[RMDB]
RNA sequence: GGGAACGACUCGAGUAGAGUCGAAAAUAAUGCCACUUCGGUGGCAUUAGCAGGUACGAAAGCCCUAUCAAGUACAAAAUCCCAAACAACAAGAUUGGCAAAUAAUGCAUAGCUUCGGCUAUGCAAAUCAAUCCGAAUGUUUCGACAUUCGGAUUGAAAAAGAAACAACAACAACAAC
Reactivity to DMS in 0.01 (KOAc 150mM, MgCl2 10mM, bicine 150mM(pH8.5), 24C), signal-to-noise 2, nucleotides 027 to 126: u000a000a000u010g000c000c000a010c000u000u020c300g110g050u000g020g010c000a000u010u010a000g040c210a120g000g050u000a070c040g020a070a190a160g000c020c000c140u000a060u000c060a090a110g000u000a030c050a020a070a130a120u000c040c000c000a120a060a110c060a020a040c060a130a120g000a070u000u000g010g000c030a100a100a070u000a100a110u020g040c000a000u000a010g000c000u000u010c230g040g010c010u000a010u000g000c000a000a040a080
Reactivity to 2A3 in 0.01 (KOAc 150mM, MgCl2 10mM, bicine 150mM(pH8.5), 24C), signal-to-noise 1, nucleotides 027 to 126: u040a010a010u000g020c000c000a000c010u020u000c220g030g020u010g100g020c000a000u000u000a000g000c000a030g000g210u040a010c010g020a200a000a020g000c000c000c010u070a090u100c040a110a000g010u020a040c020a010a080a010a130u010c000c000c010a040a100a040c060a060a000c020a060a020g090a140u060u160g050g000c000a030a100a020u210a100a070u060g000c000a010u000a000g010c020u040u020c280g010g000c000u010a000u000g000c000a000a000a000